[RMDB]
An RNA of 177 nucleotides, treated with 2A3 and DMS and read out base by base. Conditions: 150 mM KOAc, 10 mM MgCl2 and 150 mM bicine (pH 8.5), 24 C. The 2A3 profile rests on 734 reads. It was measured as part of the RMDB library 15KREP.
RNA sequence: GGGAACGACUCGAGUAGAGUCGAAAAUGUCUGAUUACUGUACGUUUGUUUGUUGGGCUCAUGGCUUUGAAUUAACGUCUGCAUCAUACUUUUGCAAGAUAGGUAAGGAACAGAAGUGUUGCAUGUGCUAACGUUAAGCGUUCGCGCUUAACGUUAGAAAAGAAACAACAACAACAAC
Reactivity to 2A3 in 0.01 (KOAc 150mM, MgCl2 10mM, bicine 150mM(pH8.5), 24C), signal-to-noise 1, nucleotides 027 to 126: u070g010u000c030u040g080a080u000u070a150c030u040g000u050a060c020g030u000u060u110g000u030u080u100g050u050u100g010g010g000c000u000c070a090u090g030g000c070u030u050u190g000a020a010u130u030a000a040c000g020u000c000u060g040c040a000u020c010a040u060a120c040u020u070u020u040g000c020a060a000g000a060u080a020g100g000u080a060a000g040g030a010a010c010a000g110a120a020g040u000g030u080u080g080c050a060u090g000u010g110
Reactivity to DMS in 0.01 (KOAc 150mM, MgCl2 10mM, bicine 150mM(pH8.5), 24C), signal-to-noise 2, nucleotides 027 to 126: u010g020u000c050u010g000a110u000u000a090c110u000g020u000a060c060g020u000u010u000g010u000u000u010g020u020u000g010g010g000c060u000c090a080u000g020g000c030u000u000u000g020a050a080u010u010a040a080c080g000u000c020u000g000c140a070u000c060a060u000a040c080u000u000u000u000g000c080a040a120g010a070u010a040g000g000u000a060a070g000g010a040a200c060a020g000a050a070g010u000g010u000u000g010c080a060u000g020u000g000